[RMDB]
RNA sequence: GGGAACGACUCGAGUAGAGUCGAAAAAAGGAGGAAGAAAAGAACUGAGCAUUAUUCUCUUUGACAAAAGGUAAAAUGACAAGGACUAUCAGGCUGACCUCCCUUCCCCAGGAAAUGAAAGAAGUCACUUCUGAAUUCUGUUCGCAGAAUUCAGAAGAAAAGAAACAACAACAACAAC
Reactivity to DMS in 0.01 (KOAc 150mM, MgCl2 10mM, bicine 150mM(pH8.5), 24C), signal-to-noise 2, nucleotides 027 to 126: a090a040g000g020a090g010g000a230a020g010a170a010a200a090g010a070a160c000u000g030a100g020c050a020u010u000a140u000u040c060u020c000u010u000u010g000a120c300a080a030a070a010g000g040u000a010a030a050a030u000g000a060c080a160a140g020g000a200c070u000a200u020c120a060g000g010c040u010g020a120c000c030u000c000c000c020u010u000c030c000c010c230a100g010g000a020a100a050u010g000a030a010a130g000a090a140g000u040c170a130
Reactivity to 2A3 in 0.01 (KOAc 150mM, MgCl2 10mM, bicine 150mM(pH8.5), 24C), signal-to-noise 2, nucleotides 027 to 126: a000a000g070g000a020g010g000a040a040g030a090a220a050a000g030a110a000c000u040g000a000g040c040a000u010u020a160u300u030c100u000c000u010u030u020g110a050c110a010a100a000a010g050g000u070a080a060a010a080u030g000a020c000a010a020g010g000a010c010u020a090u100c000a020g080g000c020u080g030a060c000c000u000c000c020c000u000u000c000c030c000c000a000g000g170a080a030a010u110g010a220a040a010g060a040a010g020u120c000a000
Background:
Conditions: 150 mM KOAc, 10 mM MgCl2 and 150 mM bicine (pH 8.5), 24 C. This 177-nucleotide RNA was probed chemically with DMS and 2A3. Reactivities are given for positions 27 through 126. It was measured as part of the RMDB library RFM100. DMS adducts were read by reverse transcription with MarathonRT.